[RMDB]
RNA sequence: GGGAACGACUCGAGUAGAGUCGAAAAUCAACAAGGUUUGUACCCACAUUGUCGAUAUCGAUUUCGGCGAGAUGAAGCUCUUUACAGGUAAUUACGACUUCUGGUAUCAGACCAACCAGAUGCUCCACACAUGGUCCAUCUUCGGAUGGACCAUGUGAAAAGAAACAACAACAACAAC
Reactivity to DMS in 0.01 (KOAc 150mM, MgCl2 10mM, bicine 150mM(pH8.5), 24C), signal-to-noise 2, nucleotides 027 to 126: u010c020a120a120c140a120a180g030g010u000u010u020g000u010a080c010c010c030a170c170a070u000u000g040u010c060g000a020u010a300u030c140g020a120u000u000u000c040g000g000c010g000a020g000a140u010g020a070a150g000c070u010c060u000u000u000a090c180a090g040g010u010a050a040u000u000a090c230g010a070c020u000u000c000u000g040g020u000a070u020c040a080g010a050c060c060a140a040c070c060a050g010a000u000g000c060u000c000c130a150
Reactivity to 2A3 in 0.01 (KOAc 150mM, MgCl2 10mM, bicine 150mM(pH8.5), 24C), signal-to-noise 2, nucleotides 027 to 126: u050c000a000a090c040a040a180g030g010u000u040u080g030u040a050c000c060c010a020c010a070u090u060g020u020c000g000a010u030a100u200c100g140a130u070u090u000c010g030g000c020g000a050g000a020u130g020a030a020g030c020u060c000u160u160u060a110c100a050g000g200u130a100a120u150u060a080c070g010a030c000u000u000c010u040g060g000u020a040u190c060a020g090a100c050c040a010a000c010c000a000g010a010u020g080c030u020c000c000a060